An RNA of 207 nucleotides, treated with 2A3 and read out base by base. For 2A3 the reverse transcriptase was SuperScript II with manganese. It was measured as part of the RMDB library ARCHII.
RNA sequence: GGGAACGACUCGAGUAGAGUCGAAAAAAGUGGGGAUGUUAAGGUGGUGGAAUAUUGGGCUGUCCCAGAUGGCUGGGCUUGGUGGGCUAAUUUCUGGCCUGCCCUAUCCAAGUACAGAGUUGGAUCAUGUGGUCCAAUUGAAAGAAUGGGCUACUAGCCUACGGAUGUGGUUCGCCACAUCCGUAGGAAAAGAAACAACAACAACAAC
Reactivity to 2A3 in 0.01 (KOAc 150mM, MgCl2 10mM, bicine 150mM(pH8.5), 24C), signal-to-noise 1, nucleotides 027 to 156: a000a000g030u090g000g000g000g040a060u050g020u180u100a120a050g050g000u020g070g000u050g020g020a030a000u100a120u110u060g010g010g020c030u000g070u220c000c000c000a040g030a080u080g050g000c030u000g000g010g000c040u000u030g000g000u000g000g020g020c000u020a060a130u030u080u000c240u160g000g030c010c000u020g000c010c000c000u030a070u030c030c000a040a020g000u050a080c030a030g050a000g030u050u030g010g010a010u090c010a060u120g120u180g070g000u000c000c010a020a010u060u110g010a070a060a100g090a100a040u000g000g000g000c000u000a000c030u020a020g040
Record summary: Values cover nucleotides 27 to 156. The 2A3 profile rests on 565 reads.